An RNA of 177 nucleotides, treated with DMS and 2A3 and read out base by base. The data come from the RNA Mapping Database (RMDB), library M2PK50. The DMS profile rests on 1,401 reads. Reactivities are given for positions 27 through 126. The 2A3 profile rests on 1,779 reads.
RNA sequence: GGGAACGACUCGAGUAGAGUCGAAAACGAUUAGCAUUCGUGCUAAUCGAAUCAGGUAGUACCUAUCUCUAUUACCUGUAGUGGCCAACGUCCGGUCAGAGAAUCGAGUCCUGUUCGCAGGACUCAACAACAAAGAACCGUUCGCGGUUCUUUGUUGAAAAGAAACAACAACAACAAC
Reactivity to DMS in 0.01 (KOAc 150mM, MgCl2 10mM, bicine 150mM(pH8.5), 24C), signal-to-noise 2, nucleotides 027 to 126: c030g020a000u000u000a000g010c000a050u000u010c250g050u000g020c000u000a000a020u000c000g020a080a090u000c010a010g000g000u000a010g010u000a010c230c130u000a090u010c130u010c120u000a010u000u000a000c000c000u000g000u010a100g010u000g020g030c000c000a120a100c090g000u010c040c030g010g040u010c020a100g020a200g000a130a100u020c150g000a000g000u000c000c000u000g000u000u010c200g030c030a010g000g000a010c000u000c000a000a110
Reactivity to 2A3 in 0.01 (KOAc 150mM, MgCl2 10mM, bicine 150mM(pH8.5), 24C), signal-to-noise 2, nucleotides 027 to 126: c010g010a000u010u000a000g000c000a010u000u070c250g090u070g010c000u010a010a000u000c000g000a020a110u080c000a000g020g000u000a010g000u020a050c040c050u160a140u250c100u010c010u040a010u010u060a010c000c000u010g010u030a120g130u030g030g000c000c020a100a040c090g230u040c090c060g000g030u010c040a000g020a020g050a190a180u270c120g000a000g000u000c000c000u010g040u070u030c240g000c060a000g000g000a010c010u010c000a000a010